[RMDB]
An RNA of 177 nucleotides, treated with 2A3 and DMS and read out base by base. Conditions: 150 mM KOAc, 10 mM MgCl2 and 150 mM bicine (pH 8.5), 24 C. Reactivities are given for positions 27 through 126. For 2A3, 6,814 sequencing reads were counted.
RNA sequence: GGGAACGACUCGAGUAGAGUCGAAAAGCGUGUGUGGUUGUGUGUGGAUUGAUGUGGGUUUUAACUUGUUGCCGUUCGGGACGUUGACGAAAUGGAGCGAUUUGACCCGUCUUGAAACACGGACCAAUCAUACAGUGUACUUCGGUACACUGUAUGAAAAAGAAACAACAACAACAAC
Reactivity to 2A3 in 0.01 (KOAc 150mM, MgCl2 10mM, bicine 150mM(pH8.5), 24C), signal-to-noise 4, nucleotides 027 to 126: g100c090g000u110g010u020g030u050g090g030u050u040g180u050g010u010g010u000g160g010a030u000u050g010a020u050g070u210g080g040g000u040u020u020u040a030a020c020u020u020g030u050u130g180c000c010g010u020u010c030g030g030g100a110c150g130u140u210g070a050c010g030a010a030a080u110g020g000a010g030c020g010a030u010u000u050g010a010c000c000c000g000u000c000u000u010g010a030a000a000c010a000c010g000g010a010c030c000a000a050
Reactivity to DMS in 0.01 (KOAc 150mM, MgCl2 10mM, bicine 150mM(pH8.5), 24C), signal-to-noise 4, nucleotides 027 to 126: g020c150g020u000g020u010g020u000g000g020u000u000g020u010g040u000g000u000g000g020a230u000u010g000a020u000g020u030g040g000g010u000u000u010u000a030a060c150u000u000g010u000u010g020c010c010g010u000u000c020g020g010g030a110c200g010u000u000g020a130c030g010a030a020a050u000g010g010a080g010c010g000a070u000u000u010g000a030c010c020c010g010u000c010u000u000g000a300a100a040c060a030c000g010g000a050c030c030a060a130